Record summary
Chemical mapping of a 177-nucleotide RNA with DMS and 2A3. For DMS the reverse transcriptase was MarathonRT. High DMS reactivity at an A or C suggests that its Watson-Crick edge is free. The RNA was probed in 150 mM KOAc, 10 mM MgCl2 and 150 mM bicine (pH 8.5) at 24 C. For 2A3 the reverse transcriptase was SuperScript II with manganese. Values cover nucleotides 27 to 126.
RNA sequence: GGGAACGACUCGAGUAGAGUCGAAAAGAUAUGGACUGGAACUACUGCACUCAGGCUCGAAGAACUCGGAAACGAGGGAGAGCCUGUUGCAGCCAGUCCUAAGUCAAAACCGGCGUUCGCGCCGGAACCAGAGAAUGAGGUUCGCCUCAUUCUCUGGAAAAGAAACAACAACAACAAC
Reactivity to DMS in 0.01 (KOAc 150mM, MgCl2 10mM, bicine 150mM(pH8.5), 24C), signal-to-noise 1, nucleotides 027 to 126: g010a010u000a300u000g010g010a010c010u020g000g000a090a050c040u030a300c020u000g000c010a010c200u000c010a000g010g000c030u000c000g000a150a130g000a060a200c000u010c020g000g000a070a070a150c000g000a030g020g000g010a040g000a020g000c000c000u000g000u010u010g000c000a000g010c000c020a030g000u020c000c000u000a010a090g000u010c050a020a030a100a140c000c000g000g020c030g040u000u030c220g020c040g010c040c000g000g000a000a040
Reactivity to 2A3 in 0.01 (KOAc 150mM, MgCl2 10mM, bicine 150mM(pH8.5), 24C), signal-to-noise 2, nucleotides 027 to 126: g000a000u070a060u180g000g020a010c000u040g000g020a100a020c110u300a090c010u300g000c010a030c110u080c020a010g000g020c020u000c000g260a300a090g000a060a050c000u000c000g000g050a070a050a030c000g000a010g010g030g000a040g000a000g000c010c010u000g000u000u000g000c010a010g000c000c000a000g010u000c000c000u000a000a000g030u000c010a000a000a140a250c000c000g000g030c020g040u110u190c300g000c020g000c130c000g030g000a010a050